[RMDB]
RNA sequence: GGGAACGACUCGAGUAGAGUCGAAAAUCCAGCUCCAAUAGCGUAUAUUAAAGUUGUUGCAGUUAAAAAGCUCGUAGUUGGAUUUCUGCUGGAAGGCCAGUCCGCCCUCAGGGGUGUGCACUUGGUGAAUUCUAGCAUCCUUCUGGAUUUCUCCACACUCUAACUGAAAGUUCGCUUUCAGUUAGAGAAAAGAAACAACAACAACAAC
Reactivity to 2A3 in 0.01 (KOAc 150mM, MgCl2 10mM, bicine 150mM(pH8.5), 24C), signal-to-noise 1, nucleotides 027 to 156: u000c010c000a000g020c020u000c020c000a060a060u050a090g010c020g100u070a100u040a070u300u250a230a190a030g020u020u050g030u000u020g060c130a090g040u130u200a220a250a130a160a100g020c050u140c160g200u180a060g020u030u010g010g000a000u030u070u050c060u020g000c000u000g010g000a010a000g040g000c000c020a000g020u000c000c000g000c020c000c010u050c070a130g100g000g000g000u010g070u160g020c070a010c040u040u120g000g000u030g090a100a080u030u020c010u000a000g020c030a020u010c010c000u070u080c070u140g050g040a050u060u080u000c090u000c010c050a030c000a000